[RMDB]
RNA sequence: GGGAACGACUCGAGUAGAGUCGAAAAUGUGCUCAAAAGGCAGGGAGACCUUGUGAAAGUAACCUUACUUCUCUGAGCCACUUUCCCCACUAGUAACAUACAGAUAAUAGUGGAGUUUCCAUUUCACAGGGUCAUUCUGGGGAUUAAAUAACUGCAACCGUACCGGUAGUUUCGACUACCGGUACGGAAAAGAAACAACAACAACAAC
Reactivity to 2A3 in 0.01 (KOAc 150mM, MgCl2 10mM, bicine 150mM(pH8.5), 24C), signal-to-noise 1, nucleotides 027 to 156: u040g050u100g000c020u040c010a030a050a030a080g050g020c070a040g020g110g000a130g000a000c000c030u030u010g040u000g000a070a070a010g080u120a060a150c010c040u040u130a120c030u050u060c040u010c030u080g010a030g000c000c000a020c060u010u000u010c000c050c030c000a000c000u070a010g130u150a050a050c020a150u240a110c090a060g100a090u090a120a020u020a050g030u010g000g040a020g000u010u040u050c020c050a040u000u060u000c010a000c000a000g010g010g070u000c010a000u070u080c040u110g000g000g000g020a000u090u210a140a080a120u180a010a050c020u090g000c000a020a050